[RMDB]
RNA sequence: GGGAACGACUCGAGUAGAGUCGAAAAGAUAAUGUCUUCGGACAUUAUCCACGCCUAAAGGCUUUAAUUAAUUAGCUAAGCCUGCUAAUUAAAAUGGCAUAAACAACUGUCCAUUCGUGGACAGUAACUCUUACUCACUUUUCGAAGUGAGUAAGAGAAAAGAAACAACAACAACAAC
Reactivity to 2A3 in 0.01 (KOAc 150mM, MgCl2 10mM, bicine 150mM(pH8.5), 24C), signal-to-noise 7, nucleotides 027 to 126: g000a000u010a000a010u000g000u000c010u030u070c240g090g000a000c000a000u000u000a000u000c000c010a040c050g040c000c010u110a160a120a030g150g000c000u130u060u040a040a040u030u030a000a010u010u010a050g010c020u080a110a110g200c020c090u030g000c010u010a020a030u040u030a020a030a040a090u110g020g000c030a050u200a050a150a030c070a030a020c010u000g000u000c000c000a020u030u070c180g110u030g000g000a000c000a000g000u000a000a000
Reactivity to DMS in 0.01 (KOAc 150mM, MgCl2 10mM, bicine 150mM(pH8.5), 24C), signal-to-noise 6, nucleotides 027 to 126: g010a010u000a000a000u000g000u010c010u000u010c200g040g010a020c000a000u000u000a010u000c010c050a110c260g000c010c010u010a060a110a100g000g000c010u010u010u010a070a120u000u000a010a010u000u000a000g010c010u010a080a170g020c230c200u010g000c000u000a000a010u000u000a000a010a080a130u000g000g000c000a090u010a080a090a080c180a100a050c010u010g000u000c000c000a050u000u010c200g030u000g000g000a010c000a010g010u000a030a080

Annotation: An RNA of 177 nucleotides, treated with 2A3 and DMS and read out base by base. The RNA was probed in 150 mM KOAc, 10 mM MgCl2 and 150 mM bicine (pH 8.5) at 24 C. 2A3 adducts were read by reverse transcription with SuperScript II with manganese. DMS (dimethyl sulfate) methylates the pairing face of unpaired adenines and cytosines. The 2A3 profile rests on 14,113 reads. Reactivities are given for positions 27 through 126.